The record gives the reactivity of an RNA of 177 nucleotides to DMS and 2A3. For DMS the reverse transcriptase was MarathonRT. In probing experiments dimethyl sulfate is read out at A N1 and C N3, which are open when not base-paired. The data come from the RNA Mapping Database (RMDB), library TTRDES.
RNA sequence: GGGAACGACUCGAGUAGAGUCGAAAAGAUAUGGAUGGGACUACCCACCAAACUUCUCGCAGCAAUCGGAAACGAUUGACGAGAAGUUUGAGGUCCCAUCCUAAGUCAAAAGUCGCGUUCGCGCGACCUGGAAACAAGUGUUCGCACUUGUUUCCAGAAAAGAAACAACAACAACAAC
Reactivity to DMS in 0.01 (KOAc 150mM, MgCl2 10mM, bicine 150mM(pH8.5), 24C), signal-to-noise 2, nucleotides 027 to 126: g020a250u000a200u000g000g000a000u000g000g000g020a020c000u000a180c040c020c040a300c090c000a020a000a010c000u000u000c000u000c000g000c300a160g000c040a040a010u000c000g020g000a090a080a230c000g020a000u000u000g020a150c010g000a000g000a000a000g000u000u000u000g010a070g000g020u000c000c000c000a000u000c000c000u000a010a090g000u040c210a110a080a090a020g030u000c000g010c000g050u000u010c260g020c010g030c000g010a000c000
Reactivity to 2A3 in 0.01 (KOAc 150mM, MgCl2 10mM, bicine 150mM(pH8.5), 24C), signal-to-noise 1, nucleotides 027 to 126: g150a020u300a180u300g000g000a010u000g020g000g020a010c010u210a300c030c020c020a020c010c030a010a000a000c010u020u010c000u000c000g000c090a280g000c010a000a030u000c010g000g050a060a080a040c000g020a010u000u030g050a030c000g010a000g000a000a000g000u000u000u000g030a000g030g010u000c020c010c000a000u000c000c010u000a010a010g000u050c060a020a000a050a230g000u000c000g000c010g040u070u160c270g010c010g000c000g190a000c030

Overview:
2A3 adducts were read by reverse transcription with SuperScript II with manganese.